An RNA of 207 nucleotides, treated with DMS and 2A3 and read out base by base. For DMS the reverse transcriptase was MarathonRT. Conditions: 150 mM KOAc, 10 mM MgCl2 and 150 mM bicine (pH 8.5), 24 C.
RNA sequence: GGGAACGACUCGAGUAGAGUCGAAAAAUGGCGAAUGCAUGGGGAAUUACAUCUGUGUCGCGAGUUCGAUUCUCGCCAGGGCCUGGUCCUGUAGCUCAGUUGGUAGAGCAAGCUGUUCCCCGGACACAAAAUCCAGCUAGGUUCGCCUAGCUGGAAACUUGCAAAUAUUGUUCGCAAUAUUUGCAAGAAAAGAAACAACAACAACAAC
Reactivity to DMS in 0.01 (KOAc 150mM, MgCl2 10mM, bicine 150mM(pH8.5), 24C), signal-to-noise 3, nucleotides 027 to 156: a060u000g030g000c050g020a120a060u010g030c030a090u020g010g000g030g000a100a080u020u010a060c050a080u010c060u010g030u010g020u030c030g010c010g010a080g000u000u000c020g000a300u000u000c000u000c010g020c020c020a090g020g000g010c050c120u000g050g000u000c000c000u000g000u000a090g010c000u000c020a110g000u000u000g030g020u000a070g000a020g010c000a150a100g000c020u000g010u000u000c000c000c020c020g020g000a070c080a080c030a030a060a100a090u000c010c000a000g000c000u000a000g010g030u000u020c290g020c000c000u010a010g000c000u000g000g000a000a000a030
Reactivity to 2A3 in 0.01 (KOAc 150mM, MgCl2 10mM, bicine 150mM(pH8.5), 24C), signal-to-noise 4, nucleotides 027 to 156: a000u100g060g010c050g090a110a010u140g050c080a080u090g010g010g020g030a060a050u130u140a130c020a030u030c020u030g080u020g020u150c000g000c000g010a010g000u010u010c000g000a010u010u000c000u010c000g000c010c000a010g010g010g000c060c200u150g090g040u020c000c000u000g020u030a010g000c000u000c010a060g020u190u120g180g100u180a020g010a000g000c000a010a010g000c020u010g000u030u000c020c000c000c020g010g000a030c030a000c030a040a090a010a050u000c000c000a000g000c000u000a000g030g000u020u030c060g040c050c010u000a010g000c000u000g000g000a000a000a000